[RMDB]
RNA sequence: GGGAACGACUCGAGUAGAGUCGAAAAGAUAUGGAUGGUUAGUGCAUCAGGGAGGCUUUUGACGGUUGCACCAUCGGAAACGAUGGAAUAACCGAUAAGCCUCCUGAUGCACUAACCAUCCUAAGUCGAUAGAUACACCGUUCGCGGUGUAUCUAUCAAAAGAAACAACAACAACAAC
Reactivity to DMS in 0.01 (KOAc 150mM, MgCl2 10mM, bicine 150mM(pH8.5), 24C), signal-to-noise 2, nucleotides 027 to 126: g000a080u010a300u010g000g000a020u000g010g010u000u000a000g010u000g030c000a010u000c000a030g020g060g010a040g010g010c000u010u000u000u000g010a300c120g010g010u000u010g030c300a270c000c010a000u000c010g010g000a170a130a250c000g000a010u000g000g000a050a060u000a030a020c000c000g000a060u010a000a020g010c000c000u010c000c010u000g000a000u010g020c000a000c000u000a000a000c000c000a000u010c000c000u000a000a100g010u000c130